An RNA of 207 nucleotides, treated with DMS and 2A3 and read out base by base. Reactivities are given for positions 27 through 156. The data come from the RNA Mapping Database (RMDB), library M2RFPK. For 2A3 the reverse transcriptase was SuperScript II with manganese.
RNA sequence: GGGAACGACUCGAGUAGAGUCGAAAAUAGCUGCAACAUUAUUUGAGUAUCCUGAAAACGGGCUUUUCAGAAUGGUGUUGCCGGAUAAAAUUGUAGGAGUGCAUAGUGGCCCGUAUAGCAGGCAUUAGAGAGCUACAGAUGUUCGCAUCUGUAGCAAGGUUACCAAAUGGUUCGCCAUUUGGUAACCAAAAGAAACAACAACAACAAC
Reactivity to DMS in 0.01 (KOAc 150mM, MgCl2 10mM, bicine 150mM(pH8.5), 24C), signal-to-noise 1, nucleotides 027 to 156: u000a150g020c050u000g000c000a070a050c010a120u010u010a070u010u000u000g020a120g100u000a060u010c020c000u000g010a020a030a070a100c110g010g030g010c070u000u000u000u020c020a120g000a040a020u000g020g040u000g020u010u000g000c020c060g060g000a080u000a040a090a100a080u060u010g020u000a080g000g010a080g030u000g030c050a030u000a070g010u000g030g020c000c000c030g040u000a110u000a070g030c060a050g000g000c020a070u040u000a140g010a230g000a170g040c010u000a020c000a000g010a010u010g010u010u010c300g030c000a020u000c000u000g020u000a010g000c020a020a010
Reactivity to 2A3 in 0.01 (KOAc 150mM, MgCl2 10mM, bicine 150mM(pH8.5), 24C), signal-to-noise 2, nucleotides 027 to 156: u070a050g040c070u050g000c000a010a020c000a040u020u080a040u080u060u040g020a040g030u080a130u170c000c000u050g060a060a020a020a020c050g010g000g030c060u080u130u030u060c020a040g050a130a010u040g010g000u000g000u000u010g000c020c020g000g020a020u150a150a150a040a070u160u100g040u080a060g010g100a030g040u030g030c060a080u060a090g050u120g080g020c010c000c010g000u050a040u010a020g030c030a010g000g030c000a020u010u110a060g020a020g000a000g070c000u000a000c000a000g000a000u000g030u030u070c090g010c080a000u000c000u000g020u030a000g000c000a000a000